[RMDB]
RNA sequence: GGGAACGACUCGAGUAGAGUCGAAAAGAUAUGGAGUAAGACGAAUCACAAGCCUGAGCAAGAGAGCUAUUCGGAAACGAAUAGACUCUUGAUGACCUCAGGCUUGUGACUAUCUUACUCCUAAGUCGAUGAGAGAUGUCUUCGGACAUCUCUCAUCAAAAGAAACAACAACAACAAC
Reactivity to DMS in 0.01 (KOAc 150mM, MgCl2 10mM, bicine 150mM(pH8.5), 24C), signal-to-noise 1, nucleotides 027 to 126: g000a120u000a300u000g000g000a070g020u000a030a010g000a010c100g010a050a120u000c000a000c000a000a000g020c000c000u020g010a010g000c020a030a110g000a000g020a000g000c000u000a000u000u000c000g010g040a170a100a300c010g000a010a010u000a000g000a150c000u000c000u010u010g000a100u020g000a020c300c000u010c000a010g000g000c000u010u000g010u010g000a000c100u000a150u000c000u000u000a010c000u010c010c000u000a000a050g000u000c060